RNA sequence: GGGAACGACUCGAGUAGAGUCGAAAACUUGCCAAUUGAUUCUGAGUAGCUUUAUCGAGAUCAGAAGCAAAUUGCGCAAAGGCUUCUAAUUCUGCGAAUUGCGCUAGUUCUAAUUUUAAUUUACCAGCUGUGAGAAUACGUUCGCGUAUUCUCACAGAAAAGAAACAACAACAACAAC
Reactivity to DMS in 0.01 (KOAc 150mM, MgCl2 10mM, bicine 150mM(pH8.5), 24C), signal-to-noise 2, nucleotides 027 to 126: c040u000u010g010c020c000a050a010u020u000g000a070u000u030c000u020g000a030g000u020a090g060c090u020u010u020a050u030c100g000a110g010a100u040c040a020g000a000a000g010c090a050a080a050u010u010g020c210g000c020a080a020a020g000g010c070u000u020c050u000a030a100u010u020c040u020g040c070g000a060a100u000u010g000c040g020c020u000a080g000u020u020c050u040a060a070u000u050u010u040a010a050u030u000u000a080c030c030a080g010
Reactivity to 2A3 in 0.01 (KOAc 150mM, MgCl2 10mM, bicine 150mM(pH8.5), 24C), signal-to-noise 6, nucleotides 027 to 126: c020u010u030g030c000c010a020a020u000u050g030a030u050u020c010u040g040a010g070u120a080g140c050u110u220u140a270u300c120g040a020g010a080u010c000a010g000a020a000g000c050a030a070a140u050u080g040c130g020c070a000a060a010g080g000c010u050u010c010u040a110a160u110u050c020u060g070c050g050a100a100u100u060g060c020g020c040u040a010g030u040u000c050u050a050a150u040u080u080u170a110a190u090u110u140a110c050c050a040g080